[RMDB]
RNA sequence: GGGAACGACUCGAGUAGAGUCGAAAACCUGAUUCGUCAGGGCACGAGCGUACUACCACACCUUUUGACGUCUUCCCACUUGACAUGUCCCAAAUAGGACAACAGCAAGUGAACAGACGAUAAGGUGUGGUAUCGCCUAUAUGGACUUCGGUCCAAACGGCACUUACAUAUUCGUAUGUAAGUGCCGAAAAGAAACAACAACAACAAC
Reactivity to DMS in 0.01 (KOAc 150mM, MgCl2 10mM, bicine 150mM(pH8.5), 24C), signal-to-noise 1, nucleotides 027 to 156: c020c030u010g010a070u010u010c230g040u000c010a010g000g020g030c090a110c150g000a070g000c020g030u010a100c150u010a030c000c010a000c000a010c000c000u010u010u000u010g010a300c050g000u000c010u000u000c070c030c000a010c020u000u000g030a080c070a300u000g000u020c010c000c020a100a140a290u000a050g000g000a010c000a010a040c140a190g040c000a010a000g000u030g020a120a040c160a050g000a040c000g010a100u000a050a020g070g000u010g030u020g000g000u000a000u000c030g050c000c000u010a120u000a110u000g010g000a030c000u000u000c250g080g020u000c000c000a060a090a190
Reactivity to 2A3 in 0.01 (KOAc 150mM, MgCl2 10mM, bicine 150mM(pH8.5), 24C), signal-to-noise 3, nucleotides 027 to 156: c020c010u020g040a050u000u120c170g000u010c110a070g060g000g010c130a050c180g060a130g010c060g050u090a100c070u020a000c010c000a010c000a000c000c010u040u010u040u300g250a120c030g000u000c020u000u040c020c020c000a000c000u000u010g020a090c030a090u110g000u000c000c000c020a130a300a200u300a140g020g000a030c010a040a050c000a050g100c000a000a010g000u010g000a040a000c020a030g000a000c000g000a000u010a030a000g000g000u000g010u000g000g000u000a000u000c000g000c000c010u210a180u020a080u260g000g000a000c000u030u020c300g150g000u010c000c000a010a070a000